RNA sequence: GGGAACGACUCGAGUAGAGUCGAAAAGAAAGCUCCUCAACCGUGUGGAGGAGAAUGGCUAUAACCACCGAAACCUGAGGAAACAGGAAGCCACAACGGAAGCCAUGUGGUUAGCACACGGAAGAAAGGUCCUAUUACUCUUCGGAGUAAUAGGACCAAAAGAAACAACAACAACAAC
Reactivity to DMS in 0.01 (KOAc 150mM, MgCl2 10mM, bicine 150mM(pH8.5), 24C), signal-to-noise 3, nucleotides 027 to 126: g050a090a020a130g020c010u000c000c000u000c000a150a070c030c030g000u000g040u010g000g000a020g000g000a040g010a110a070u040g000g000c070u000a080u060a050a150c110c040a090c010c030g000a070a150a060c010c000u010g010a120g030g040a050a070a170c010a040g000g020a190a090g010c050c000a030c030a050a200c210g000g000a090a130g010c050c060a100u000g000u000g000g020u010u010a030g040c030a030c010a010c000g000g000a170a080g000a060a080a090
Reactivity to 2A3 in 0.01 (KOAc 150mM, MgCl2 10mM, bicine 150mM(pH8.5), 24C), signal-to-noise 4, nucleotides 027 to 126: g110a000a040a000g080c020u010c000c010u030c030a170a210c020c000g000u000g010u000g000g000a010g000g000a010g010a020a040u070g000g020c000u030a030u080a260a020c040c020a040c030c020g060a120a050a070c000c000u060g020a080g060g270a120a040a010c000a000g010g000a030a000g030c030c020a010c010a060a180c090g120g050a110a050g090c040c010a030u040g000u070g020g010u040u050a020g020c000a000c000a000c000g050g050a010a000g080a010a090a020
Record summary:
Conditions: 150 mM KOAc, 10 mM MgCl2 and 150 mM bicine (pH 8.5), 24 C. Structure probing data (DMS and 2A3) for a 177-nucleotide construct. Source: RMDB library OK1LIB, as collected in RNAgym. For 2A3 the reverse transcriptase was SuperScript II with manganese.